[RMDB]
RNA sequence: GGGAACGACUCGAGUAGAGUCGAAAAGCCUCCUCGCUUCCAUAGAAAGGGGACGGGGCAGAUCGCAAGUGCUACAACCGAGCGGUGGUAUCUGUCAAACUAAGCAGCCACUUCACAUCAAUUGACUAAACGAUGCCGAUCUUCGGAUCGGCAUCAACUUCUAGCUCAUCUUCGGAUGAGCUAGAAGAAAAGAAACAACAACAACAAC
Reactivity to 2A3 in 0.01 (KOAc 150mM, MgCl2 10mM, bicine 150mM(pH8.5), 24C), signal-to-noise 1, nucleotides 027 to 156: g010c000c000u010c010c000u030c010g040c050u130u090c030c010a140u100a300g190a130a120a000g000g030g000g000a020c010g000g010g000g030c020a000g020a050u060c070g020c100a040a050g040u000g000c060u110a150c030a180a080c050c090g130a110g000c020g000g000u000g000g000u030a020u000c020u010g010u000c040a010a000a110c090u120a000a110g000c040a020g000c000c010a000c000u190u100c080a130c000a090u190c120a140a160u140u130g120a090c020u200a100a040a050c060g000a000u000g000c000c000g000a000u000c000u000u040c190g070g040a010u000c000g010g000c010a010u000c000a000a000